[RMDB]
RNA sequence: GGGAACGACUCGAGUAGAGUCGAAAAGCUAUGGUGCAACUCUUUAAGGCAAUAACGAACUAAUUCAAAGCAAGUAAUGGAGAAAUGCCAGGGUCACUAUCUAGCCAUAAUAGUGCUUGACAGUAUGAGAAUCUGCUACCCUUCGGGGUAGCAGAAAGUAUACGUGCAUCUUCGGAUGCACGUAUACAAAAGAAACAACAACAACAAC
Reactivity to 2A3 in 0.01 (KOAc 150mM, MgCl2 10mM, bicine 150mM(pH8.5), 24C), signal-to-noise 2, nucleotides 027 to 156: g060c030u100a020u080g000g020u040g030c000a010a070c010u070c040u070u090u130a090a020g020g000c050a050a200u180a170a050c050g060a020a010c060u120a070a030u180u070c100a000a070a090g050c060a050a050g060u180a000a210u250g010g010a070g010a040a160a030u020g000c000c030a010g050g000g000u000c000a000c010u000a020u150c030u000a020g010c000c000a020u080a110a070u020a110g170u070g040c070u000u060g070a050c040a020g030u100a070u130g070a050g030a070a120u000c000u000g000c000u000a000c000c010c000u010u030c110g050g000g000g000u010a000g010c020a000g010a000a000a000
Reactivity to DMS in 0.01 (KOAc 150mM, MgCl2 10mM, bicine 150mM(pH8.5), 24C), signal-to-noise 1, nucleotides 027 to 156: g020c060u010a100u000g020g080u030g010c010a090a030c020u000c020u000u000u000a020a080g080g040c040a100a090u020a050a170c040g020a090a090c120u020a080a120u000u000c050a090a080a130g000c070a060a130g000u010a070a080u000g010g010a110g020a060a130a040u000g040c000c000a120g000g040g000u000c010a040c030u000a000u000c010u000a090g020c010c040a050u010a080a090u030a100g030u000g030c010u030u000g000a070c050a010g000u000a080u010g000a120g000a140a130u000c000u000g010c000u000a000c000c000c000u000u010c300g060g010g030g010u010a020g000c010a000g000a000a010a110
Background: Structure probing data (2A3 and DMS) for a 207-nucleotide construct. The reactions ran in a buffer of 150 mM KOAc, 10 mM MgCl2 and 150 mM bicine (pH 8.5), at 24 C. Values cover nucleotides 27 to 156. 2A3 adducts were read by reverse transcription with SuperScript II with manganese.